Conditions: 150 mM KOAc, 10 mM MgCl2 and 150 mM bicine (pH 8.5), 24 C. Chemical mapping of a 177-nucleotide RNA with DMS.
RNA sequence: GGGAACGACUCGAGUAGAGUCGAAAAUCGUGCCCGUUCGCGGGCACGAGUCACCUACACCGCUUCCAGUCUGGGCCACUACCUCUCUAUGAGAACUCAGUAUAUUUGGUCAGUUCGCUGACCAAAAACCAAACCCCUAAUUCGUUAGGGGUUUGGUAAAAGAAACAACAACAACAAC
Reactivity to DMS in 0.01 (KOAc 150mM, MgCl2 10mM, bicine 150mM(pH8.5), 24C), signal-to-noise 1, nucleotides 027 to 126: u000c000g010u000g000c010c010c000g050u000u020c190g020c010g010g000g000c000a000c000g000a000g010u000c140a040c040c010u010a090c140a050c060c060g000c070u000u000c050c010a070g010u000c000u010g000g020g000c020c020a050c050u000a060c050c020u000c010u000c040u000a070u000g010a120g000a090a110c070u000c060a090g000u000a060u000a140u000u000u000g000g000u000c010a010g000u000u010c200g000c000u000g020a000c000c000a000a000a030a110